[RMDB]
Source: RMDB library OK1LIB, as collected in RNAgym. Structure probing data (DMS and 2A3) for a 177-nucleotide construct. 2A3 adducts were read by reverse transcription with SuperScript II with manganese. The RNA was probed in 150 mM KOAc, 10 mM MgCl2 and 150 mM bicine (pH 8.5) at 24 C.
RNA sequence: GGGAACGACUCGAGUAGAGUCGAAAACCGCAAGGAGAAGGCCAGGAAGGCUUACGAUGCCCUCCUCAACUCCCUUGACGGCCCCGGUCUUCUCGUUCUCUACGCCAGUGACGGUGGUAACGCCGAGCACCACGUGGAUAUUCGUAUCCACGUGGUGAAAAGAAACAACAACAACAAC
Reactivity to DMS in 0.01 (KOAc 150mM, MgCl2 10mM, bicine 150mM(pH8.5), 24C), signal-to-noise 3, nucleotides 027 to 126: c010c020g030c120a010a020g010g010a050g020a050a030g000g000c120c300a030g000g000a010a080g000g000c000u000u070a070c300g010a160u030g000c000c010c020u000c010c000u010c060a190a120c070u000c030c000c010u010u000g000a110c030g000g000c030c000c000c010g000g010u000c030u000u040c000u080c040g010u000u000c020u000c020u030a150c040g060c070c000a060g010u000g000a080c050g010g020u000g000g000u040a170a090c020g000c110c030g010a130g010
Reactivity to 2A3 in 0.01 (KOAc 150mM, MgCl2 10mM, bicine 150mM(pH8.5), 24C), signal-to-noise 7, nucleotides 027 to 126: c000c000g000c020a000a020g090g040a240g020a190a030g040g000c060c010a010g020g010a030a020g000g010c000u050u090a110c170g050a040u220g000c000c000c000u010c000c000u020c000a030a060c010u060c010c010c020u050u050g060a180c020g020g010c000c000c000c010g000g030u010c020u060u010c020u010c000g040u080u000c020u000c010u050a040c030g020c030c030a070g020u050g160a050c010g000g030u040g040g030u070a090a020c030g010c040c020g020a030g030